Structure probing data (DMS and 2A3) for a 177-nucleotide construct.
[RMDB]
RNA sequence: GGGAACGACUCGAGUAGAGUCGAAAACGCAAGCCAGGCCACGUACUGCAUGCAGGAUUUGGGUAUUCCGAAGCAGAAGCUGAACCCGAAGGGAGGUGCGAUCGCUCUCGGCCACCCUCUCGGCUGCCACAGUGUAAAGAUUCGUCUUUACACUGUGAAAAGAAACAACAACAACAAC
Reactivity to DMS in 0.01 (KOAc 150mM, MgCl2 10mM, bicine 150mM(pH8.5), 24C), signal-to-noise 9, nucleotides 027 to 126: c110g020c080a070a080g010c030c030a090g010g010c030c050a070c100g010u000a100c050u000g000c040a070u010g010c070a100g010g000a080u000u000u000g010g000g010u000a100u000u000c020c020g010a110a090g010c030a040g000a110a130g010c040u000g010a080a110c190c000c010g000a060a040g000g000g010a060g010g020u000g020c020g000a030u010c300g000c130u010c300u000c010g000g000c060c040a060c020c000c010u000c100u000c020g000g010c060u000g000c090
Reactivity to 2A3 in 0.01 (KOAc 150mM, MgCl2 10mM, bicine 150mM(pH8.5), 24C), signal-to-noise 9, nucleotides 027 to 126: c050g020c030a040a030g010c020c030a030g030g030c020c020a060c050g080u120a080c030u030g020c010a140u090g020c040a040g020g070a060u080u100u140g140g010g070u110a110u120u040c020c010g010a040a010g000c020a010g020a090a010g010c040u060g030a050a050c000c000c020g010a020a020g010g000g010a040g020g000u150g220c010g010a020u080c080g020c080u070c010u010c030g000g010c000c000a010c010c010c000u000c030u010c020g020g000c020u040g010c020

For 2A3, 45,218 sequencing reads were counted.
Source: RMDB library OK2TRN, as collected in RNAgym.
For DMS the reverse transcriptase was MarathonRT.
Conditions: 150 mM KOAc, 10 mM MgCl2 and 150 mM bicine (pH 8.5), 24 C.